[RMDB]
Chemical mapping of a 177-nucleotide RNA with 2A3. 2A3 adducts were read by reverse transcription with SuperScript II with manganese. 2A3 is a SHAPE reagent: it acylates the 2'-hydroxyl of flexible nucleotides of all four kinds.
RNA sequence: GGGAACGACUCGAGUAGAGUCGAAAAUUAUGGGCGACCGGGGCAUCCUUAUCCAUAACACGAUCUUUGGGGAGCAGGUGUUCCUGCCCCUGGAACACUCGCAAUUCAGUCGGUAUCGCUGGCGCGGGCCGGUAUGGGAGUUCGCUCCCAUACCGGCAAAAGAAACAACAACAACAAC
Reactivity to 2A3 in 0.01 (KOAc 150mM, MgCl2 10mM, bicine 150mM(pH8.5), 24C), signal-to-noise 1, nucleotides 027 to 126: u080u070a070u110g010g000g000c070g030a070c000c000g000g000g070g000c010a010u020c000c010u000u020a020u070c030c000a030u110a080a020c060a000c130g140a110u020c010u100u190u170g010g000g000g000a110g010c020a000g000g000u050g100u110u060c000c000u040g060c000c000c000c000u010g020g000a030a040c030a000c030u020c070g010c050a070a050u060u060c010a080g040u030c080g000g060u070a030u130c030g010c090u020g030g000c010g010c040g010g020